The data come from the RNA Mapping Database (RMDB), library OK3TST.
The record gives the reactivity of an RNA of 207 nucleotides to DMS and 2A3.
The reactions ran in a buffer of 150 mM KOAc, 10 mM MgCl2 and 150 mM bicine (pH 8.5), at 24 C.
As a SHAPE reagent, 2A3 marks flexible, mostly unpaired nucleotides at the ribose 2'-OH.

[RMDB]
RNA sequence: GGGAACGACUCGAGUAGAGUCGAAAAAGAGAUGCAGCAUCUGCCUUGCAGAAAAAGGCAGCCGGGGCUCGCUCACAUGAUUGACAGACUCGAACACGUUCAUGGCGGGAAGCAAGACGAUUGGCAGCAUGAACUUGAGCAUCACAACUGGAGCACAGAUUUAGGGUCAUUUCGAUGACCCUAAAUCAAAAGAAACAACAACAACAAC
Reactivity to DMS in 0.01 (KOAc 150mM, MgCl2 10mM, bicine 150mM(pH8.5), 24C), signal-to-noise 1, nucleotides 027 to 156: a090g040a150g010a090u000g040c020a090g000c060a120u000c000u010g010c010c020u010u010g010c060a300g000a040a090a130a040a030g000g000c050a050g010c160c110g020g070g030g010c000u000c040g000c030u000c010a050c090a110u010g010a110u000u000g000a160c090a140g010a090c000u000c040g010a060a090c050a190c030g010u010u010c040a040u000g040g050c010g030g010g040a060a060g030c040a110a120g010a130c090g010a160u000u000g000g010c040a060g000c050a060u010g010a060a090c020u010u020g000a110g040c050a100u010c010a050c050a040a080c000u000g010g000a060g030c050a090c110a120
Reactivity to 2A3 in 0.01 (KOAc 150mM, MgCl2 10mM, bicine 150mM(pH8.5), 24C), signal-to-noise 3, nucleotides 027 to 156: a000g080a010g020a070u090g030c100a020g020c010a030u020c000u010g000c000c000u010u040g060c130a050g280a070a070a020a000a010g010g010c010a010g010c040c040g100g000g100g000c010u030c060g000c000u040c000a060c000a060u150g020a160u110u080g020a040c030a030g030a050c020u020c040g010a090a010c060a040c080g030u030u030c010a040u040g080g010c060g030g050g000a020a020g020c050a060a030g030a020c080g060a090u080u110g010g000c020a030g000c030a050u020g010a050a010c010u040u040g020a030g010c020a030u050c030a000c000a060a140c030u090g040g000a040g030c060a030c020a080